[RMDB]
RNA sequence: GGGAACGACUCGAGUAGAGUCGAAAACUGCUACAGCCUGCUUUGCUGGCAGCAUAGAGAGCAGGCAAUGGCUGGGAAUUACAUUCUCCACCCCCAUCCCAUGAUUGGGAGGUUUGGGAGUAUGAAAUAAAAGCCCCAGGCUCCUUGCCUAAGAACAACCUCAUGAUAUGUUCGCAUAUCAUGAGGUAAAAGAAACAACAACAACAAC
Reactivity to 2A3 in 0.01 (KOAc 150mM, MgCl2 10mM, bicine 150mM(pH8.5), 24C), signal-to-noise 3, nucleotides 027 to 156: c020u030g010c010u090a050c030a050g050c010c030u080g070c070u200u210u270g040c060u070g050g000c020a030g020c000a020u150a010g190a000g010a010g080c080a020g000g000c000a010a020u070g040g000c010u010g010g000g000a030a090u110u030a080c010a010u030u030c000u000c000c000a040c010c040c000c000c000a020u030c070c080c020a090u260g050a140u160u080g000g020g000a180g070g010u110u170u220g110g000g000a010g010u030a000u020g080a140a060a030u170a030a140a020a020g050c000c010c000c000a020g060g050c030u080c040c000u020u050g000c000c000u060a100a040g050a080a000c050a020
Reactivity to DMS in 0.01 (KOAc 150mM, MgCl2 10mM, bicine 150mM(pH8.5), 24C), signal-to-noise 2, nucleotides 027 to 156: c030u000g010c020u000a070c070a300g020c020c060u030g010c020u010u000u000g020c000u000g050g010c090a130g000c120a140u010a100g030a090g000a040g010c050a040g020g060c020a060a040u010g030g020c000u000g030g000g010a150a130u000u010a070c100a300u010u000c000u020c000c030a150c030c000c020c000c000a070u010c040c040c110a080u020g010a250u000u000g000g010g000a060g020g000u000u000u000g010g010g000a030g040u000a060u010g010a090a090a150u010a040a060a190a210g000c070c000c010c040a090g020g000c010u000c050c030u000u000g000c020c000u010a090a150g000a090a070c100a130

The record gives the reactivity of an RNA of 207 nucleotides to 2A3 and DMS. It was measured as part of the RMDB library OK3TST.